Structure probing data (2A3) for a 177-nucleotide construct. For 2A3 the reverse transcriptase was SuperScript II with manganese.
RNA sequence: GGGAACGACUCGAGUAGAGUCGAAAAUGGGCAAGACCGGUGCCAGCCGCCGCGGUAAUACCGGCAGCCCGAGUGAUGACCGCUAUUAUUGGGCCUAAAGCGUCCGUAGCUGGCCAGGCAAGUCCAUCCGAGGUAUGGCUUUCGAGCCAUACCUCGGAAAAGAAACAACAACAACAAC
Reactivity to 2A3 in 0.01 (KOAc 150mM, MgCl2 10mM, bicine 150mM(pH8.5), 24C), signal-to-noise 1, nucleotides 027 to 126: u030g010g000g000c000a010a050g050a250c000c000g050g110u240g060c000c000a000g000c020c000g040c000c040g040c000g000g000u000a020a020u000a130c000c000g000g020c020a050g000c000c010c010g000a000g000u080g090a030u020g110a030c000c000g000c050u100a030u180u000a090u020u280g010g000g000c000c000u220a210a200a000g000c020g000u000c000c040g020u050a040g000c030u010g000g000c000c010a000g020g000c050a130a000g030u020c000c000a000u000
Reactivities are given for positions 27 through 126.